RNA sequence: GGGAACGACUCGAGUAGAGUCGAAAACAGUUAUGUCCGUCCCUCCCGAAGCUGCGCGCUCGGUCGAAGAGGACGACCAUCGCCGAUAGAGGACGACCGGUCUUCGGUCAAGGGAAUAAGAGUAAAACUAGAAUUUGAGGUUCGCCUCAAAUUCUAGAAAAGAAACAACAACAACAAC
Reactivity to DMS in 0.01 (KOAc 150mM, MgCl2 10mM, bicine 150mM(pH8.5), 24C), signal-to-noise 2, nucleotides 027 to 126: c050a080g020u010u010a080u010g030u000c030c040g000u010c010c010c000u010c170c020c010g020a060a080g010c080u000g000c120g000c080g020c040u000c050g010g010u000c040g010a120a150g000a120g000g000a090c080g000a040c050c060a080u000c070g000c070c020g000a100u000a080g000a070g000g000a090c030g010a080c120c040g000g000u010c050u010u000c010g000g010u000c100a090a050g000g000g010a070a080u010a050a050g000a190g010u010a070a070a080a160
Reactivity to 2A3 in 0.01 (KOAc 150mM, MgCl2 10mM, bicine 150mM(pH8.5), 24C), signal-to-noise 2, nucleotides 027 to 126: c000a080g020u110u140a070u140g060u030c010c070g010u020c010c000c000u020c030c000c000g020a040a020g000c030u060g000c020g000c020g000c200u000c000g010g050u000c030g010a030a010g090a100g120g060a030c000g030a010c020c000a070u030c030g030c020c040g070a050u110a140g100a050g030g090a100c050g000a040c040c000g060g080u060c000u100u150c030g000g000u010c030a000a020g080g050g040a040a120u140a150a000g040a000g080u140a030a120a040a030